[RMDB]
RNA sequence: GGGAACGACUCGAGUAGAGUCGAAAACAUCACCUUUUGCUAGGCGCAGAUCGCAUGGAUCCAUGCCGUCAGGGGCAACAGCCACAUAGGACUGUCCACUGAAUUUUUGGUCGCCCUCGAAGGCACGACGUUGCGCAAGCUUCGGCUUGCGCAACGUAAAAGAAACAACAACAACAAC
Reactivity to DMS in 0.01 (KOAc 150mM, MgCl2 10mM, bicine 150mM(pH8.5), 24C), signal-to-noise 1, nucleotides 027 to 126: c110a140u000c100a120c000c020u000u020u000u030g060c060u020a160g000g000c090g000c040a180g010a040u000c170g010c120a020u020g000g000a090u000c110c040a020u000g000c020c150g020u000c040a040g000g000g000g010c060a100a040c070a010g000c020c000a200c140a220u010a120g030g000a070c010u000g030u010c040c020a000c060u000g000a020a070u000u000u000u000u000g030g010u000c070g020c020c000c000u000c030g000a050a010g000g000c040a050c210g010
Reactivity to 2A3 in 0.01 (KOAc 150mM, MgCl2 10mM, bicine 150mM(pH8.5), 24C), signal-to-noise 1, nucleotides 027 to 126: c020a040u100c050a060c000c000u000u000u090u150g050c090u060a070g030g020c060g010c090a070g010a160u020c070g050c070a050u120g120g010a040u020c090c000a040u090g010c010c020g080u000c000a010g010g000g000g010c000a050a040c020a070g030c010c000a030c020a270u200a050g050g040a050c010u040g000u140c000c020a210c010u070g040a150a140u050u090u000u080u260g040g010u010c000g020c000c000c000u000c010g050a040a000g020g000c010a000c060g080